[RMDB]
RNA sequence: GGGAACGACUCGAGUAGAGUCGAAAAGCGUACUACUUAAGUAAGGUAGCCUUGGAUUUACAUGUCUCUAGCGUGUCCCAAAUAGGAUCGGGCAUGUUGUCAGGCUACUCAAAGUAAGUAUCGCAAAUCAGCGUAUCUCUUCGGAGAUACGCUGAAAGGAUUAGCCGUUGUUCGCAACGGCUAAUCCAAAAGAAACAACAACAACAAC
Reactivity to 2A3 in 0.01 (KOAc 150mM, MgCl2 10mM, bicine 150mM(pH8.5), 24C), signal-to-noise 2, nucleotides 027 to 156: g000c000g000u050a050c000u010a000c000u100u020a130a100g050u060a070a140g230g010u000a000g040c000c020u150u300g300g030a190u260u200u250a000c030a020u000g030u050c040u060c070u300a180g110c040g160u220g080u120c010c000c120a250a280a170u300a090g000g000a000u020c010g000g040g000c000a000u000g000u000u020g070u000c000a000g000g020c020u000a020c020u020c050a020a000a000g000u080a070a040g010u020a030u250c050g000c000a000a100a100u030c000a000g010c000g000u000a000u020c000u020c000u000u130c210g030g000a000g000a000u000a000c000g000c000u010g000a000a000a000

This 207-nucleotide RNA was probed chemically with 2A3. The 2A3 profile rests on 1,030 reads. 2A3 adducts were read by reverse transcription with SuperScript II with manganese. The data come from the RNA Mapping Database (RMDB), library RNAMAK.